RNA sequence: GGGAACGACUCGAGUAGAGUCGAAAAAGGGUCUUCCAGGGACUUUGCAUCCUUUCUCACCAGUUUCUACUAUAGUCUCACAUAGUGGACACUGCUGUCACCAACUUACAAAUAAGGAGGCUAGGGCGUCCACUUGUCUAUUCGUAGACAAGUGGACAAAAGAAACAACAACAACAAC
Reactivity to 2A3 in 0.01 (KOAc 150mM, MgCl2 10mM, bicine 150mM(pH8.5), 24C), signal-to-noise 2, nucleotides 027 to 126: a000g060g010g010u020c030u090u030c080c000a030g050g030g010a050c020u070u150u200g030c010a060u020c010c000u010u110u050c080u000c010a100c050c030a020g010u010u020u000c000u040a030c000u020a030u010a160g060u060c020u030c130a070c000a030u080a040g060u030g000g000a020c020a000c040u100g030c040u050g010u070c010a060c090c040a060a080c000u090u170a090c100a070a140a120u220a180a020g040g000a040g060g010c030u040a020g090g000g040c050
Reactivity to DMS in 0.01 (KOAc 150mM, MgCl2 10mM, bicine 150mM(pH8.5), 24C), signal-to-noise 2, nucleotides 027 to 126: a060g020g020g020u000c030u010u000c040c070a070g030g010g010a040c030u010u000u010g000c120a080u020c030c010u000u000u000c030u000c030a120c180c060a030g010u000u000u000c010u000a010c010u010a030u000a060g040u000c140u000c150a090c130a030u000a020g020u000g000g010a010c040a040c030u000g000c120u010g020u000c060a120c070c030a040a130c090u040u000a050c140a060a110a100u010a080a090g010g010a140g000g020c020u010a030g010g030g000c190